Conditions: 150 mM KOAc, 10 mM MgCl2 and 150 mM bicine (pH 8.5), 24 C. Structure probing data (2A3) for a 177-nucleotide construct. As a SHAPE reagent, 2A3 marks flexible, mostly unpaired nucleotides at the ribose 2'-OH.

RNA sequence: GGGAACGACUCGAGUAGAGUCGAAAAAACAUACUUGACCGGCAGGUCAUGGCGUAAGCGGUUCUAAGCCUGGCAAGACCUUUGACCACAAUGCCUCCGAUUUGGCCGGGGAGGCGUUGUGGUCAAUCACCGUCAGCGGAUUCGUCCGCUGACGGUGAAAAGAAACAACAACAACAAC
Reactivity to 2A3 in 0.01 (KOAc 150mM, MgCl2 10mM, bicine 150mM(pH8.5), 24C), signal-to-noise 2, nucleotides 027 to 126: a000a000c140a140u150a130c030u120u080g000a100c000c000g000g000c010a010g020g020u060c000a060u110g100g000c010g020u020a140a000g000c000g050g030u000u150c000u080a080a020g000c010c000u000g000g030c040a010a000g150a110c000c000u070u020u040g000a000c020c000a000c010a000a000u020g000c000c000u050c000c020g160a150u160u070u270g100g020c020c000g010g000g030g030a000g000g000c000g000u010u000g000u000g010g000u000c000a000a000u010
The 2A3 profile rests on 854 reads.
Reactivities are given for positions 27 through 126.